Source information: The record gives the reactivity of an RNA of 177 nucleotides to 2A3 and DMS. DMS adducts were read by reverse transcription with MarathonRT. The RNA was probed in 150 mM KOAc, 10 mM MgCl2 and 150 mM bicine (pH 8.5) at 24 C. Source: RMDB library OK1LIB, as collected in RNAgym.
RNA sequence: GGGAACGACUCGAGUAGAGUCGAAAAACGGCUGGACCGUUGCGAUGCCGAACACUGUCCGGCCUACCUCGAAUCCACCAAACCCGAGAAUGUGCCCUACUAUCAACGGUUCGGUUUCCGGGUGACCCGUAAAACGGCAUUUCGAUGCCGUUUUACGAAAAGAAACAACAACAACAAC
Reactivity to 2A3 in 0.01 (KOAc 150mM, MgCl2 10mM, bicine 150mM(pH8.5), 24C), signal-to-noise 7, nucleotides 027 to 126: a000c030g000g000c010u010g010g000a010c000c020g020u030u070g040c070g120a130u260g100c090c040g060a080a020c050a010c060u030g000u000c000c000g000g000c010c000u020a030c000c000u020c020g040a030a050u030c020c030a040c010c030a100a050a040c010c010c010g060a060g030a130a060u100g030u110g080c020c020c010u080a090c040u070a070u160c030a030a040c040g020g000u020u010c010g020g000u010u030u020c000c020g020g000g000u040g070a050c020c010
Reactivity to DMS in 0.01 (KOAc 150mM, MgCl2 10mM, bicine 150mM(pH8.5), 24C), signal-to-noise 4, nucleotides 027 to 126: a060c130g050g000c010u010g010g000a030c010c070g000u020u010g020c160g010a060u010g020c050c070g000a070a120c100a030c030u000g020u000c030c020g020g000c020c020u000a030c030c010u000c300g010a050a070u010c040c050a050c120c060a050a050a060c000c000c000g000a300g010a010a270u000g000u010g000c040c030c050u000a290c040u010a190u030c060a060a300c300g000g020u000u010c130g000g030u000u020u000c010c030g010g000g010u000g000a080c040c020